[RMDB]
RNA sequence: GGGAACGACUCGAGUAGAGUCGAAAAUAAACCACAAUUACUUCAAUUCUGUUAAUUGCUCUAAAUCAAUUGAUAGAAAGUAAGAGUGGUAAAUUAAAAAUUGCCACCUAAGAAGAUAGAAUAAUUAAAGGUAAACGAGAUUCGUCUCGUUUACCUUAAAAGAAACAACAACAACAAC
Reactivity to 2A3 in 0.01 (KOAc 150mM, MgCl2 10mM, bicine 150mM(pH8.5), 24C), signal-to-noise 4, nucleotides 027 to 126: u040a010a090a000c000c000a020c010a040a100u090u040a010c000u000u040c030a030a120u000u020c000u010g000u070u000a010a000u010u000g080c030u090c170u300a120a100a030u050c000a000a000u000u000g000a010u000a010g000a020a030a010g020u060a000a010g030a020g000u000g000g000u020a010a050a010u050u070a010a010a000a010a040u030u020g020c010c020a070c020c010u050a070a080g050a110a010g020a120u130a060g130a130a090u140a220a060u150u150a100
Reactivity to DMS in 0.01 (KOAc 150mM, MgCl2 10mM, bicine 150mM(pH8.5), 24C), signal-to-noise 2, nucleotides 027 to 126: u000a100a120a100c000c030a020c070a070a220u040u000a030c000u020u020c190a130a060u000u000c000u030g000u000u000a000a000u000u000g000c240u040c080u030a030a150a080u040c000a010a000u010u000g000a010u000a000g000a010a010a020g000u000a050a020g010a290g030u000g020g000u000a030a040a020u020u030a020a060a020a110a110u000u000g050c050c040a070c100c040u000a050a070g010a070a070g010a200u050a080g020a120a030u010a090a070u010u020a050